Description:
Chemical mapping of a 207-nucleotide RNA with 2A3. The 2A3 profile rests on 465 reads. The data come from the RNA Mapping Database (RMDB), library OK3TST.

RNA sequence: GGGAACGACUCGAGUAGAGUCGAAAAAGGUUAAAAUUUUGGAAAAAUCCACCAAACGUCGCGUAGGUGAACUAGAGCAAGCCUUUGUAGACGCACUAGAUGCGUUAGCCUCACCAAUUCCUGCUGAACAUGCUGGUGUUAUUGCACUGGGGCGUGCAGACGACGAAGGAUUCGUCCUUCGUCGUCUAAAAGAAACAACAACAACAAC
Reactivity to 2A3 in 0.01 (KOAc 150mM, MgCl2 10mM, bicine 150mM(pH8.5), 24C), signal-to-noise 1, nucleotides 027 to 156: a010g150g020u120u010a170a140a060a080u250u240u190u080g010g030a110a020a030a170a180u070c030c010a040c020c020a100a090a000c050g080u020c010g030c020g040u090a050g060g000u060g040a010a060c100u130a080g020a040g110c070a000a020g000c010c000u000u030u120g030u050a090g000a010c000g070c020a010c060u150a100g010a290u060g010c010g010u080u030a010g020c000c000u000c000a100c170c020a010a050u070u000c000c010u050g120c010u110g060a200a070c080a170u220g000c010u120g010g000u020g090u060u130a080u050u040g020c030a030c060u000g010g010g010g000c040g030u080g000c030